[RMDB]
RNA sequence: GGGAACGACUCGAGUAGAGUCGAAAAGGUACGCGCGCGACACGGCCAGCGCGAGAGAGGCCACUCAUAUGCGCGGCCUACUCGUACUGACAUCAUACUGAUCUGCGCUGUGUGUGAUGCAUCGUACAUCUUCCCCUUGCUUCGGCAAGGGGAAGAUAAAAGAAACAACAACAACAAC
Reactivity to 2A3 in 0.01 (KOAc 150mM, MgCl2 10mM, bicine 150mM(pH8.5), 24C), signal-to-noise 2, nucleotides 027 to 126: g120g020u010a020c010g060c000g000c000g000c000g040a010c010a000c070g000g000c020c020a020g000c000g000c010g030a000g020a000g010a000g000g000c000c000a010c020u070c070a300u270a140u300g090c080g020c050g000g040c000c000u020a030c000u000c000g000u020a030c030u070g090a030c020a030u120c000a020u120a300c100u210g050a100u050c040u050g060c020g000c040u020g020u020g000u000g060u080g030a130u040g000c000a090u100c040g000u000a000c000
Reactivity to DMS in 0.01 (KOAc 150mM, MgCl2 10mM, bicine 150mM(pH8.5), 24C), signal-to-noise 2, nucleotides 027 to 126: g020g010u000a030c010g010c300g000c000g000c040g000a010c020a010c060g000g020c030c010a050g030c140g010c000g010a030g000a240g010a060g010g010c020c000a040c030u000c130a230u010a100u000g000c130g030c040g000g060c010c000u000a020c000u010c010g030u000a070c030u010g000a140c180a050u010c040a140u010a160c140u000g030a040u010c080u010g040c110g020c030u010g020u000g020u000g010u010g010a070u000g000c030a040u010c010g000u000a030c030